[RMDB]
RNA sequence: GGGAACGACUCGAGUAGAGUCGAAAAUUAAAGGUGGUGGUGGAGGAGGAACGCCUCCAGCUGCUCAGCCGACGUACCGCACACACGCCUUUUCGGCAUAGAGCAGCAAUAGGGUAUCCAUAAAAAAUCAUUCUGUUGAGUUCGCUCAACAGAAUGAAAAAGAAACAACAACAACAAC
Reactivity to DMS in 0.01 (KOAc 150mM, MgCl2 10mM, bicine 150mM(pH8.5), 24C), signal-to-noise 2, nucleotides 027 to 126: u000u010a070a150a090g010g030u020g010g000u000g000g070u000g000g000a050g020g010a110g000g000a060a140c150g000c020c000u000c060c080a130g020c000u000g000c000u000c000a110g010c000c000g020a020c300g000u030a080c080c070g000c040a040c080a080c110a110c050g010c080c050u000u000u000u000c000g020g020c000a050u020a040g010a020g030c010a020g000c000a060a010u020a050g010g000g000u000a050u000c080c010a150u040a020a000a050a080a090a090